[RMDB]
RNA sequence: GGGAACGACUCGAGUAGAGUCGAAAAGAUAUGGAUCGUUAGAGCUUUUGACGACGGUCGGAAACGACCGAAUCGAUAAGCUCUGACGAUCCUAAGUCAAACGGUGGUUCCUUCGGGAACCACCGAACCAGUCUUCAAUGUUCGCAUUGAAGACUGGAAAAGAAACAACAACAACAAC
Reactivity to 2A3 in 0.01 (KOAc 150mM, MgCl2 10mM, bicine 150mM(pH8.5), 24C), signal-to-noise 1, nucleotides 027 to 126: g000a010u070a020u180g010g010a010u010c000g010u000u020a010g000a020g010c010u070u080u170u240g080a060c110g020a000c030g010g000u000c010g010g010a090a060a040c000g000a010c000c000g010a030a030u060c010g010a050u040a230a000g000c000u020c000u000g010a010c000g000a000u010c000c000u000a000a000g010u000c010a110a060a090c030g040g000u010g000g000u000u020c020c000u050u110c300g020g000g000a000a020c000c000a010c000c000g000a010a010
Reactivity to DMS in 0.01 (KOAc 150mM, MgCl2 10mM, bicine 150mM(pH8.5), 24C), signal-to-noise 1, nucleotides 027 to 126: g000a030u010a300u000g010g000a010u000c000g000u000u000a000g010a020g040c000u000u000u000u000g000a170c080g000a160c120g000g000u000c000g000g000a040a130a180c010g000a000c010c000g000a300a020u010c000g000a070u000a050a000g010c000u020c000u010g020a010c010g000a010u000c000c010u000a000a070g010u010c010a200a100a210c050g020g000u000g030g010u000u010c010c000u010u010c220g000g010g010a000a000c000c000a010c000c000g010a000a050

The data come from the RNA Mapping Database (RMDB), library TTRDEL. The record gives the reactivity of an RNA of 177 nucleotides to 2A3 and DMS. In probing experiments dimethyl sulfate is read out at A N1 and C N3, which are open when not base-paired. The 2A3 profile rests on 2,742 reads. Reactivities are given for positions 27 through 126.